[RMDB]
RNA sequence: GGGAACGACUCGAGUAGAGUCGAAAAGAUGUUCGCUGAUUCGUCAGCCGCAUGCCCAGGUGGCCGCGAUCUUCAGGGCUACGGCGCGGAUAGGUCCGCGCUGAUCGUUUUCCUCCAACGACGCUAUAAAAGGAACGAAGGUUCGCCUUCGUUCCAACAACGAUAAACAGUUCGCUGUUUAUCGUUGAAAAGAAACAACAACAACAAC
Reactivity to 2A3 in 0.01 (KOAc 150mM, MgCl2 10mM, bicine 150mM(pH8.5), 24C), signal-to-noise 4, nucleotides 027 to 156: g070a020u060g020u100u160c090g000c010u020g000a030u010u140c230g060u020c130a000g000c000c010g000c000a020u050g010c000c000c000a010g050g030u010g030g000c010c020g120c050g060a050u040c030u080u030c070a070g000g030g000c010u010a030c010g000g010c010g000c020g000g010a050u120a200g250g130u040c000c000g000c010g000c010u010g000a020u000c000g010u040u020u080u090c020c030u080c020c040a100a040c070g070a020c030g030c080u080a070u090a220a130a040a040g020g000a000a000c000g000a010a000g010g010u040u090c140g080c010c000u000u000c000g000u000u000c000c000a000a000
Reactivity to DMS in 0.01 (KOAc 150mM, MgCl2 10mM, bicine 150mM(pH8.5), 24C), signal-to-noise 2, nucleotides 027 to 156: g040a060u000g010u000u000c070g020c020u010g000a080u020u010c270g040u000c010a040g020c000c080g000c020a040u010g020c060c000c020a170g010g040u000g010g040c000c020g080c020g000a040u000c010u020u000c090a140g010g010g040c030u000a060c030g010g000c000g040c010g000g000a080u000a100g050g020u000c000c020g030c000g070c000u000g000a030u000c040g000u000u000u010u000c000c020u000c050c060a070a070c020g010a090c030g050c000u000a120u000a050a090a080a150g010g010a040a010c020g010a040a010g010g010u000u000c250g030c010c000u000u010c000g010u000u000c000c000a040a030
This 207-nucleotide RNA was probed chemically with 2A3 and DMS. Source: RMDB library M2RFPK, as collected in RNAgym. As a SHAPE reagent, 2A3 marks flexible, mostly unpaired nucleotides at the ribose 2'-OH. Values cover nucleotides 27 to 156. The DMS profile rests on 4,859 reads. 2A3 adducts were read by reverse transcription with SuperScript II with manganese.